[RMDB]
RNA sequence: GGGAACGACUCGAGUAGAGUCGAAAACAAAAACGGAUUGUGUCAGUAAUCACAACAAACAAAAACAAAGGGAUUGUGUCCGUAAUCACAAAAACAAAACAAAAUGGAUUGUGUCCGUAAUCACAAAAUGAUAGUGAGCUUUCGAGCUCACUAUCAUAAAAGAAACAACAACAACAAC
Reactivity to 2A3 in 0.01 (KOAc 150mM, MgCl2 10mM, bicine 150mM(pH8.5), 24C), signal-to-noise 2, nucleotides 027 to 126: c000a000a060a060a000a030c060g000g040a090u010u010g000u000g050u000c040a020g100u230a220a110u260c070a040c090a160a000c080a000a160a000c040a030a110a000a020a080c160a010a110a100g020g020g000a000u050u050g000u030g010u000c000c030g080u100a000a000u050c030a010c000a000a040a000a040a000c070a010a090a000a000c010a030a140a000a070u130g000g000a050u110u000g010u000g040u040c000c100g010u060a050a000u040c020a000c020a140a000a000
Reactivity to DMS in 0.01 (KOAc 150mM, MgCl2 10mM, bicine 150mM(pH8.5), 24C), signal-to-noise 2, nucleotides 027 to 126: c120a010a070a080a060a000c130g020g000a110u040u000g050u000g010u000c100a020g010u060a040a090u000c050a060c050a040a080c120a050a130a010c190a070a060a080a090a010c170a190a120a060g010g000g000a040u000u000g000u000g050u000c020c110g020u000a110a000u000c010a030c010a040a000a000a090a080c150a000a020a050a070c300a050a080a070a140u000g000g000a120u010u000g000u000g000u050c010c080g000u010a040a020u000c040a050c150a050a000a080
Chemical mapping of a 177-nucleotide RNA with 2A3 and DMS.
The 2A3 profile rests on 766 reads.
The DMS profile rests on 1,688 reads.
The reactions ran in a buffer of 150 mM KOAc, 10 mM MgCl2 and 150 mM bicine (pH 8.5), at 24 C.